[RMDB]
RNA sequence: GGGAACGACUCGAGUAGAGUCGAAAAUGCGGGUAGCCGCUGCCGCAAUCGUCUCGGCGAUUGGCGGUAGAGGAAAGUCCAGGCUCGCCCAAGCUGAGAUGCUUGGAGUGUUCGUACCUGGCGCAAGCGGUAUCGUGAGGUUCGCCUCACGAUACCGAAAAGAAACAACAACAACAAC
Reactivity to DMS in 0.01 (KOAc 150mM, MgCl2 10mM, bicine 150mM(pH8.5), 24C), signal-to-noise 2, nucleotides 027 to 126: u010g010c010g000g000g050u000a110g020c000c010g010c000u000g030c010c000g020c000a060a000u000c010g030u000c010u030c300g030g000c000g010a010u000u000g050g010c010g030g000u010a000g000a030g010g030a080a070a030g010u000c010c000a010g030g020c000u000c010g000c030c010c000a020a000g000c000u000g000a270g010a040u000g000c000u000u000g020g000a300g020u000g010u030u000c180g010u010a120c020c000u000g020g000c040g020c300a090a080g000
Reactivity to 2A3 in 0.01 (KOAc 150mM, MgCl2 10mM, bicine 150mM(pH8.5), 24C), signal-to-noise 1, nucleotides 027 to 126: u070g030c020g000g080g030u070a030g030c040c000g000c010u000g030c000c000g050c010a000a000u000c010g040u020c030u020c090g220g000c000g000a000u010u010g240g120c000g000g000u000a010g010a000g000g030a100a040a050g070u060c020c010a010g000g010c030u070c040g000c040c000c000a000a000g010c010u010g040a040g010a100u060g030c000u010u020g020g000a140g060u180g090u080u140c110g030u070a060c000c000u010g000g000c030g010c060a010a040g130

This 177-nucleotide RNA was probed chemically with DMS and 2A3.
For DMS, 1,826 sequencing reads were counted.
The reactions ran in a buffer of 150 mM KOAc, 10 mM MgCl2 and 150 mM bicine (pH 8.5), at 24 C.
The data come from the RNA Mapping Database (RMDB), library RFMREP.
For DMS the reverse transcriptase was MarathonRT.
Values are in units of 0.01, from 0 to 300, in steps of 10.
DMS (dimethyl sulfate) methylates the pairing face of unpaired adenines and cytosines.